[RMDB]
RNA sequence: GGGAACGACUCGAGUAGAGUCGAAAAAACGGGUCAGCGAAGUGGUCGUCGGCGUGGAACCGUGCGAACGGUCGCAGCCACCAGGGCAGCUGGGGGAGGUUGUCGACAUCCACGUACCAGCUGUAGCUACUAUGGGUGGUUUCGACCACCCAUAGUAAAAAGAAACAACAACAACAAC
Reactivity to DMS in 0.01 (KOAc 150mM, MgCl2 10mM, bicine 150mM(pH8.5), 24C), signal-to-noise 4, nucleotides 027 to 126: a050a030c150g030g030g000u010c030a070g030c020g000a080a090g010u010g010g000u000c080g020u010c010g000g010c030g010u020g000g000a100a060c010c000g010u000g000c270g000a120a010c020g000g010u010c100g000c030a040g000c000c010a300c020c020a040g020g000g020c040a050g010c000u000g020g010g000g000g000a060g000g000u000u010g020u020c040g010a030c090a120u000c000c020a040c080g010u030a090c040c020a060g010c000u000g010u010a060g010c140
Reactivity to 2A3 in 0.01 (KOAc 150mM, MgCl2 10mM, bicine 150mM(pH8.5), 24C), signal-to-noise 4, nucleotides 027 to 126: a000a010c050g010g000g040u030c040a010g010c050g050a140a050g060u040g040g070u080c050g030u000c020g030g010c030g010u080g030g010a030a040c030c030g010u060g030c060g080a120a030c010g020g020u040c030g000c010a000g000c000c000a030c020c000a020g000g050g050c050a080g020c020u000g000g000g020g020g010a110g050g000u030u030g100u130c040g020a020c020a140u010c010c010a040c050g040u030a040c000c020a000g000c000u020g020u030a010g050c050

Structure probing data (DMS and 2A3) for a 177-nucleotide construct. The DMS profile rests on 9,197 reads. Reactivities are given for positions 27 through 126. 2A3 adducts were read by reverse transcription with SuperScript II with manganese. DMS adducts were read by reverse transcription with MarathonRT. DMS (dimethyl sulfate) methylates the pairing face of unpaired adenines and cytosines.